[RMDB]
RNA sequence: GGGAACGACUCGAGUAGAGUCGAAAAUAACUCCGCUUCACCAUCUAAAUUAUACAACCCAUUACCUUUAGCGGCAUUUGCAAGCUCCGGAACUUCACGCAUUGCCUGUUCUAAGCUAACUGGAUUAUCGUAGUUUUAGUUUCGACUAAAACUACGAAAAAGAAACAACAACAACAAC
Reactivity to DMS in 0.01 (KOAc 150mM, MgCl2 10mM, bicine 150mM(pH8.5), 24C), signal-to-noise 5, nucleotides 027 to 126: u010a100a150c060u000c020c030g000c040u000u010c060a080c030c030a050u000c040u010a070a090a090u000u010a090u010a130c110a070a100c020c020c010a130u000u000a080c070c040u000u010u000a060g010c060g010g010c050a060u010u000u010g010c040a050a080g000c040u000c040c050g010g010a080a110c050u000u010c050a060c110g010c040a060u010u000g010c010c020u000g020u000u010c030u000a090a090g030c080u000a020a090c080u000g010g010a100u000u000a110
Reactivity to 2A3 in 0.01 (KOAc 150mM, MgCl2 10mM, bicine 150mM(pH8.5), 24C), signal-to-noise 4, nucleotides 027 to 126: u090a030a040c010u000c010c020g010c030u050u050c020a040c050c010a030u050c010u140a070a130a100u280u120a130u060a150c060a070a090c020c000c010a040u070u120a080c020c020u050u070u090a030g010c030g040g000c010a040u050u070u120g010c010a060a030g020c010u010c040c040g030g040a030a040c010u110u090c070a020c070g020c030a040u010u100g010c000c010u020g020u050u060c060u050a040a040g020c000u000a020a030c030u060g060g020a080u090u110a110

Chemical mapping of a 177-nucleotide RNA with DMS and 2A3. It was measured as part of the RMDB library OK2TST. The reactions ran in a buffer of 150 mM KOAc, 10 mM MgCl2 and 150 mM bicine (pH 8.5), at 24 C. For 2A3, 5,074 sequencing reads were counted.